[RMDB]
RNA sequence: GGGAACGACUCGAGUAGAGUCGAAAAACAUCUCCAGCUGUGUGCCUUCUCGCCUGUUCGACAUCAGGAAACAAUGAUGGAAUAUGUUCAGACAGCGAUGCGUUACUUGUACGCUGCUACUCCGAACCACACCUACCUCAUUCGUGAGGUAGGUGUGAAAAGAAACAACAACAACAAC
Reactivity to DMS in 0.01 (KOAc 150mM, MgCl2 10mM, bicine 150mM(pH8.5), 24C), signal-to-noise 4, nucleotides 027 to 126: a050c090a080u000c050u000c000c030a090g010c040u000g020u000g030u020g000c050c020u000u000c030u000c070g010c050c030u000g000u000u000c070g030a130c050a050u000c030a040g000g020a100a110a070c160a080a080u000g000a040u020g010g010a090a110u000a090u010g010u000u010c040a060g000a060c070a020g010c020g020a080u000g020c030g000u000u010a090c200u010u010g010u000a050c050g020c000u000g010c040u000a110c120u000c020c060g000a080a100c140
Reactivity to 2A3 in 0.01 (KOAc 150mM, MgCl2 10mM, bicine 150mM(pH8.5), 24C), signal-to-noise 3, nucleotides 027 to 126: a000c010a080u030c020u010c030c000a040g030c020u020g030u010g030u070g150c010c000u080u040c030u030c040g020c000c010u050g020u060u040c040g040a020c010a060u040c020a020g120g000a130a070a030c090a050a160u110g020a040u040g040g060a090a040u160a060u150g050u020u060c030a040g030a090c020a000g030c000g160a180u090g000c020g050u050u060a100c060u130u130g040u040a020c020g010c030u030g020c000u010a060c020u020c020c020g020a030a030c000